[RMDB]
RNA sequence: GGGAACGACUCGAGUAGAGUCGAAAAGGCCUACCAUACGAUCUGUUAUAUAAAUAGGUAAAUGUUCCUUUCCAUUAUGGAUAGCAAUAGUAUGGCCGACCAUUGUGGGUAUAAUGGUAGAUGCCCGACACGUGAGAUAGUUCGCUAUCUCACGUGUAAAAGAAACAACAACAACAAC
Reactivity to 2A3 in 0.01 (KOAc 150mM, MgCl2 10mM, bicine 150mM(pH8.5), 24C), signal-to-noise 7, nucleotides 027 to 126: g030g000c000c000u010a040c020c000a020u030a040c030g080a100u020c060u020g070u100u010a060u030a030u070a160a220a060u150a050g030g060u090a050a110a120u260g060u080u110c000c000u030u030u030c030c010a070u070u080a050u260g070g020a040u050a030g010c010a020a070u020a100g090u020a090u180g060g000c020c010g010a020c000c010a070u070u100g060u110g040g040g020u080a050u010a110a080u050g060g010u020a040g010a050u080g030c000c000c020g010
Reactivity to DMS in 0.01 (KOAc 150mM, MgCl2 10mM, bicine 150mM(pH8.5), 24C), signal-to-noise 4, nucleotides 027 to 126: g000g010c050c010u000a050c010c010a030u000a060c130g000a030u000c050u000g000u000u030a110u030a050u030a050a060a050u030a000g020g010u000a060a040a100u050g000u000u000c070c010u000u020u000c000c000a090u020u020a050u050g000g000a040u010a050g000c040a020a060u010a130g020u020a150u040g000g010c020c030g000a170c010c010a030u000u010g020u010g020g020g020u010a050u010a080a020u000g000g000u000a020g000a040u000g000c000c010c030g010
This 177-nucleotide RNA was probed chemically with 2A3 and DMS. For DMS, 7,436 sequencing reads were counted. For DMS the reverse transcriptase was MarathonRT. It was measured as part of the RMDB library OK1LIB.